[RMDB]
RNA sequence: GGGAACGACUCGAGUAGAGUCGAAAAUGCUGGUCUCCCGCCAUGGGCCGCUGCUCGCCAACUCCAUCUUCCUUCCACCAGGGGCUGUGGUGAUGGAGCUGCUGCCAUACAACUGGGAGUGGAAGGGGCAGCUGCCAUAAUUCGUUAUGGCAGCUGCAAAAGAAACAACAACAACAAC
Reactivity to DMS in 0.01 (KOAc 150mM, MgCl2 10mM, bicine 150mM(pH8.5), 24C), signal-to-noise 1, nucleotides 027 to 126: u000g040c070u000g050g000u010c050u000c020c020c010g000c060c040a070u000g020g020g000c050c020g010c020u010g000c060u000c060g000c060c050a030a150c080u000c010c040a060u010c110u000u000c030c020u000u000c040c010a130c060c090a120g000g000g020g010c090u010g010u000g010g030u000g000a110u000g000g010a090g040c000u000g020c060u000g000c010c010a110u000a000c110a110a140c090u000g030g020g000a130g010u000g030g000a040a030g000g000g000
Reactivity to 2A3 in 0.01 (KOAc 150mM, MgCl2 10mM, bicine 150mM(pH8.5), 24C), signal-to-noise 1, nucleotides 027 to 126: u010g000c000u050g020g050u000c010u020c040c000c020g000c000c030a120u130g030g020g000c040c000g030c050u060g010c010u000c040g070c000c020a050a080c010u020c030c010a120u030c040u090u100c020c000u030u020c010c000a020c020c050a050g000g000g080g000c010u020g020u040g070g000u070g010a140u150g040g100a070g010c000u030g000c030u030g030c020c020a110u060a160c060a130a020c040u060g020g070g020a100g130u060g000g000a030a040g010g000g010